Conditions: 150 mM KOAc, 10 mM MgCl2 and 150 mM bicine (pH 8.5), 24 C. This 177-nucleotide RNA was probed chemically with 2A3 and DMS. For 2A3 the reverse transcriptase was SuperScript II with manganese. It was measured as part of the RMDB library 15KREP.
RNA sequence: GGGAACGACUCGAGUAGAGUCGAAAAGUCUUUCGUGGCUGGUGUGACCGCGCAAGGUGCGCGCGGUACGUAUCGAGCAGCGCUCAACUCUGAAAAACAUCAAGACCAUGUGUCUCUAACUGUGCCAUCUCUCAUUCUAGUUCGCUAGAAUGAGAGAAAAAGAAACAACAACAACAAC
Reactivity to 2A3 in 0.01 (KOAc 150mM, MgCl2 10mM, bicine 150mM(pH8.5), 24C), signal-to-noise 3, nucleotides 027 to 126: g020u000c020u040u110u060c090g020u060g040g000c000u010g000g070u040g000u040g030a050c000c000g000c000g000c070a120a110g160g040u070g070c050g000c000g000c000g010g020u020a020c020g020u030a060u110c040g010a010g050c100a100g080c020g020c080u010c030a020a050c060u060c090u160g020a030a050a030a030a040c010a020u010c060a090a060g100a240c000c020a050u030g040u020g040u000c010u000c000u030a090a100c060u100g020u060g070c010c010a030
Reactivity to DMS in 0.01 (KOAc 150mM, MgCl2 10mM, bicine 150mM(pH8.5), 24C), signal-to-noise 2, nucleotides 027 to 126: g010u000c050u000u000u000c040g030u000g000g000c030u000g000g000u000g020u000g010a030c010c000g010c000g060c040a170a140g020g010u000g000c110g000c010g040c000g000g010u000a020c070g000u000a070u000c110g020a050g000c020a130g020c160g030c070u000c020a090a090c090u000c050u010g000a040a090a100a060a050c030a020u000c050a040a070g000a150c010c010a070u000g000u010g010u000c040u000c050u010a060a110c140u010g010u000g010c040c010a190